[RMDB]
RNA sequence: GGGAACGACUCGAGUAGAGUCGAAAAUUGAAGUCAGGCUUAGUACAUAAUACUAAUGCAGUCUAUUCUCAACUAUUAGAACAGAUGACUAAUCGAACUGAAGUUUUUAAUAGAUUUCCUAAGAAUGCAAUUCUAAUGCAGCCUCCUCAUAGUACAGUAUCCUGUACUUGUUCGCAAGUACAGGAUAAAAAGAAACAACAACAACAAC
Reactivity to 2A3 in 0.01 (KOAc 150mM, MgCl2 10mM, bicine 150mM(pH8.5), 24C), signal-to-noise 3, nucleotides 027 to 156: u040u040g010a050a010g020u040c030a030g040g010c000u030u010a000g000u020a030c080a150u240a150a100u030a130c020u000a030a030u230g000c030a000g020u000c010u040a070u060u070c020u010c030a040a100c020u040a090u150u010a010g020a040a000c030a020g010a080u050g010a080c090u100a060a110u080c060g040a060a060c010u050g040a050a020g030u040u010u030u050u060a030a030u000a010g020a000u040u030u030c000c020u030a050a030g060a140a040u070g010c010a010a060u130u120c030u150a100a040u060g010c010a030g010c010c000u020c000c020u090c020a070u080a080g130u210a050c010a030g300
Reactivity to DMS in 0.01 (KOAc 150mM, MgCl2 10mM, bicine 150mM(pH8.5), 24C), signal-to-noise 2, nucleotides 027 to 156: u000u000g000a130a100g000u000c020a090g040g020c010u010u000a030g030u010a020c030a110u020a080a300u000a040c040u000a060a070u000g050c040a240g000u000c040u000a070u000u000c050u000c030a070a230c050u010a070u010u000a040g010a040a050c050a120g000a080u010g020a300c100u000a080a070u000c020g020a070a220c030u000g010a200a220g000u000u030u000u000u000a040a120u000a060g010a100u000u010u000c020c010u000a060a120g020a040a060u000g000c020a060a090u000u000c050u020a070a090u010g040c040a090g000c020c000u010c030c000u000c030a040u010a060g020u000a040c060a080g060